The record gives the reactivity of an RNA of 207 nucleotides to 2A3. As a SHAPE reagent, 2A3 marks flexible, mostly unpaired nucleotides at the ribose 2'-OH. Reactivities are rounded to 0.1 and cut off at 0 and 3. The 2A3 profile rests on 923 reads. Reactivities are given for positions 27 through 156. The reactions ran in a buffer of 150 mM KOAc, 10 mM MgCl2 and 150 mM bicine (pH 8.5), at 24 C.

[RMDB]
RNA sequence: GGGAACGACUCGAGUAGAGUCGAAAACUGCCGCCGGGACGCAGUGAUCCUCGCAGGGUCGCACGGUCGCCUCGGGUCGGCCUCGUGUCGGCUCGACCUGCGAGGGGAGCGAGUGUCGAGCCCGACCAAAACUUUCUCGCCUUCGGGCGAGAAAGAACGUGUGUACUCUCUUCGGAGAGUACACACGAAAAGAAACAACAACAACAAC
Reactivity to 2A3 in 0.01 (KOAc 150mM, MgCl2 10mM, bicine 150mM(pH8.5), 24C), signal-to-noise 2, nucleotides 027 to 156: c000u060g060c020c060g030c000c000g010g010g030a070c020g020c000a070g110u000g010a030u020c010c020u010c000g060c060a040g000g010g040u170c030g050c050a080c110g240g080u220c030g030c020c010u060c000g020g030g040u090c000g010g030c020c010u080c060g300u300g040u020c020g010g010c010u010c030g000a020c000c000u000g000c030g010a060g020g000g010g000a050g020c000g010a090g030u100g030u060c000g000a020g000c010c080c000g040a060c000c000a020a060a000a140c000u000u000u000c000u000c010g030c000c000u000u150c210g080g000g000c020g000a000g000a000a000a000g000a010a000